[RMDB]
RNA sequence: GGGAACGACUCGAGUAGAGUCGAAAACCCUGCAGAUUCGUCUGCAGGGAAAAAACCGUAGGGAUCUUUGAUCCUCCCCACCUCGAUGUGUUCGAAAGAGCACGCGAGAGGGGGAGAUCCCUAAACGGAAAAACGAUACCAAUUCGUUGGUAUCGAACUUUUGAAUAGCUUUCGAGCUAUUCAAAAGAAAAGAAACAACAACAACAAC
Reactivity to DMS in 0.01 (KOAc 150mM, MgCl2 10mM, bicine 150mM(pH8.5), 24C), signal-to-noise 1, nucleotides 027 to 156: c020c000c000u010g000c030a020g000a060u010u010c300g000u000c020u030g060c000a030g000g000g050a000a010a050a060a050a030c000c010g010u020a040g000g020g000a030u000c020u000u000u000g010a240u010c100c010u000c010c010c000c040a030c020c000u000c000g000a120u000g100u010g030u010u000c000g010a110a190a230g010a010g030c000a000c030g020c010g000a020g000a090g020g000g000g000g030a010g010a010u000c000c000c000u020a010a050a120c010g020g000a020a020a030a040a260c020g060a060u000a030c000c000a030a060u000u000c290g020u000u010g010g040u000a000u000c000g000a030a060
Reactivity to 2A3 in 0.01 (KOAc 150mM, MgCl2 10mM, bicine 150mM(pH8.5), 24C), signal-to-noise 3, nucleotides 027 to 156: c010c000c000u000g020c000a100g030a070u120u250c240g050u020c060u020g000c000a010g000g000g030a230a030a030a030a000a000c010c000g010u020a010g010g000g000a000u020c070u190u200u280g100a100u080c120c030u060c010c000c010c010a120c010c010u020c020g190a300u130g010u000g010u010u010c000g030a120a160a080g000a040g000c000a000c010g000c000g000a040g030a030g020g020g000g000g000a010g000a000u020c000c000c010u070a140a190a010c030g020g030a070a060a040a000a040c000g020a000u020a000c020c000a000a030u070u070c200g060u110u000g010g010u000a000u010c000g000a030a040